[RMDB]
RNA sequence: GGGAACGACUCGAGUAGAGUCGAAAAGAUAUGGAUCCCUAGGGAGCCUCGUGUGUCGGAAACGACACGAGGCUUUGAUCUAGUGGAUCCUAAGUCAAACUCUAGAAUGGUUCGCCAUUCUAGAGAACAUCACUCAUGGCUUCGGCCAUGAGUGAUGAAAAGAAACAACAACAACAAC
Reactivity to DMS in 0.01 (KOAc 150mM, MgCl2 10mM, bicine 150mM(pH8.5), 24C), signal-to-noise 1, nucleotides 027 to 126: g000a020u000a030u010g000g000a000u000c000c000c010u020a010g020g000g010a010g010c030c010u010c000g000u000g010u000g030u000c000g020g000a020a010a100c000g010a080c000a010c000g010a010g010g000c000u010u000u010g010a060u010c000u000a020g020u020g030g010a000u000c000c000u000a000a060g010u000c000a200a130a260c000u000c000u000a030g010a040a020u010g010g000u000u020c300g010c000c000a000u000u000c000u000a000g010a000g010a070a130